The record gives the reactivity of an RNA of 177 nucleotides to DMS. It was measured as part of the RMDB library OK2TST.
[RMDB]
RNA sequence: GGGAACGACUCGAGUAGAGUCGAAAACCCCCAGCACUGAGAUGCCAGCCCAGCUGAGGUAACUGCAGCCUCGUCUGUUCCAAUUCACGCUGCCUGCUGCAAGGCUGUGGGCUCAGGGCACUCGGGGCUAAGGCUAUUGCUUCGGCAAUAGCCUUAGAAAAGAAACAACAACAACAAC
Reactivity to DMS in 0.01 (KOAc 150mM, MgCl2 10mM, bicine 150mM(pH8.5), 24C), signal-to-noise 3, nucleotides 027 to 126: c040c010c000c100c060a020g010c030a070c020u000g010a020g000a130u000g020c030c020a130g000c010c000c000a110g010c020u010g010a160g000g010u000a040a110c030u010g000c020a030g000c010c100u000c140g020u000c060u000g020u010u000c090c090a110a120u010u000c090a070c280g000c030u000g000c040c090u000g010c040u000g010c060a050a270g000g010c010u000g010u000g010g010g020c030u000c180a070g000g000g000c020a020c010u010c020g000g000g000g030